The data come from the RNA Mapping Database (RMDB), library M2PK50. This 177-nucleotide RNA was probed chemically with DMS and 2A3. Reactivities are given for positions 27 through 126. DMS adducts were read by reverse transcription with MarathonRT.
[RMDB]
RNA sequence: GGGAACGACUCGAGUAGAGUCGAAAAUCUCCGUGAUUCGUCACGGAGAAACAUAAAUAAAAUGGGUUCAACUCCCACCCUUUUCCGACGGUAUCGGAAACCAACCUUCGCUCUUCGGAGCGAAGAAUAUCCAUACACACUUCGGUGUGUAUGGAUAAAAAGAAACAACAACAACAAC
Reactivity to DMS in 0.01 (KOAc 150mM, MgCl2 10mM, bicine 150mM(pH8.5), 24C), signal-to-noise 2, nucleotides 027 to 126: u000c000u000c000c000g060u000g000a040u010u030c230g000u000c000a000c000g000g000a000g000a020a010a060c100a120u000a100a070a120u000a100a070a120a090u000g000g050g050u000u000c150a030a300c180u000c000c000c040a140c010c000c000u000u000u000u000c000c000g020a080c150g030g010u000a300u000c000g000g000a040a020a040c140c140a060a070c150c000u000u000c000g000c000u000c000u000u020c250g000g000a000g060c000g000a000a000g030a120a160
Reactivity to 2A3 in 0.01 (KOAc 150mM, MgCl2 10mM, bicine 150mM(pH8.5), 24C), signal-to-noise 2, nucleotides 027 to 126: u000c010u000c000c000g000u010g010a020u000u080c140g010u010c080a000c000g000g010a010g000a000a000a000c020a000u280a050a110a010u180a090a090a040a070u110g000g010g000u080u080c080a070a040c050u000c010c000c010a010c010c010c010u030u050u030u010c040c020g000a030c040g120g040u180a070u090c000g000g040a000a020a000c020c050a050a110c000c000u010u010c010g000c020u030c020u060u070c250g120g000a000g000c000g000a000a000g010a000a010